Notes:
This 207-nucleotide RNA was probed chemically with 2A3. The data come from the RNA Mapping Database (RMDB), library OK3TST. The RNA was probed in 150 mM KOAc, 10 mM MgCl2 and 150 mM bicine (pH 8.5) at 24 C.
RNA sequence: GGGAACGACUCGAGUAGAGUCGAAAAACAACAGAUAGCUGGAACCAGCGUAGAAUUCUACGCAUAUCCAUAGCGAAUGGUACCUGUAAAGAAAAUAAGGUUGGAUGUACAAGUACCAACAGCCGACUAUGCCAUGGUGAUGUCAAUCACAUAUGCAGUCAGCAUGGGAGUUCGCUCCCAUGCUGACAAAAGAAACAACAACAACAAC
Reactivity to 2A3 in 0.01 (KOAc 150mM, MgCl2 10mM, bicine 150mM(pH8.5), 24C), signal-to-noise 2, nucleotides 027 to 156: a000c010a000a000c000a040g070a100u080a000g000c000u010g050g010a040a030c080c090a030g000c000g000u020a000g040a190a230u300u080c010u040a020c030g000c010a000u040a020u100c010c030a000u070a000g020c000g000a050a010u050g020g000u010a020c000c010u000g040u030a050a080a100g160a050a200a060a010u250a120a000g090g000u040u000g050g020a130u060g000u040a000c000a000a010g010u020a030c000c010a030a040c020a020g100c030c020g030a050c030u110a120u090g010c080c040a070u060g010g000u030g010a030u010g120u110c040a100a070u020c000a010c020a100u140a040u130g070c030a020
Annotation:
For 2A3, 685 sequencing reads were counted. Reactivities are given for positions 27 through 156.